[RMDB]
The record gives the reactivity of an RNA of 207 nucleotides to 2A3 and DMS.
RNA sequence: GGGAACGACUCGAGUAGAGUCGAAAAGCCAGUUAUCAGGGGUUGAUUCGAUGAUCGUCGCCGUUUCUCCAGGUAGGCAGCCGAUCUGACAGCGCACACAUGUUUCCGAUUACCGACACUCGUAGGGAGAUGACGACUAUGCCGACCACAGAGCAUGUCACUAUACUUGGUUCGCCAAGUAUAGUGAAAAAGAAACAACAACAACAAC
Reactivity to 2A3 in 0.01 (KOAc 150mM, MgCl2 10mM, bicine 150mM(pH8.5), 24C), signal-to-noise 2, nucleotides 027 to 156: g060c020c010a060g030u060u110a070u140c090a030g000g040g010g030u110u010g050a130u050u070c080g050a060u060g010a020u040c020g030u010c030g000c020c020g000u040u110u030c050u000c020c010a010g050g060u030a020g050g000c010a000g020c000c020g000a070u010c020u020g020a030c020a030g020c000g010c040a020c000a000c030a070u110g040u020u040u000c010c000g000a030u000u120a130c000c060g030a030c030a010c070u120c060g040u070a120g000g040g000a040g000a000u060g010a020c040g010a010c030u020a050u090g020c020c030g050a080c010c060a060c040a040g030a010g060c030a020u080g030
Reactivity to DMS in 0.01 (KOAc 150mM, MgCl2 10mM, bicine 150mM(pH8.5), 24C), signal-to-noise 2, nucleotides 027 to 156: g030c020c020a150g010u000u000a080u000c040a080g020g010g010g010u010u000g020a150u010u000c050g020a130u010g010a060u000c020g030u000c030g040c000c020g000u000u010u000c010u000c050c070a120g010g030u010a120g000g030c040a090g000c050c020g040a090u010c030u010g020a190c010a120g000c050g040c040a080c050a040c110a040u000g010u010u010u000c030c030g000a180u000u000a170c090c030g030a120c040a090c080u000c050g010u020a070g000g000g000a100g010a080u010g010a100c020g010a080c030u000a060u000g020c030c010g010a080c020c000a110c050a090g000a100g000c020a110u000g010
For 2A3, 1,757 sequencing reads were counted. The RNA was probed in 150 mM KOAc, 10 mM MgCl2 and 150 mM bicine (pH 8.5) at 24 C. DMS adducts were read by reverse transcription with MarathonRT. Reactivities are given for positions 27 through 156.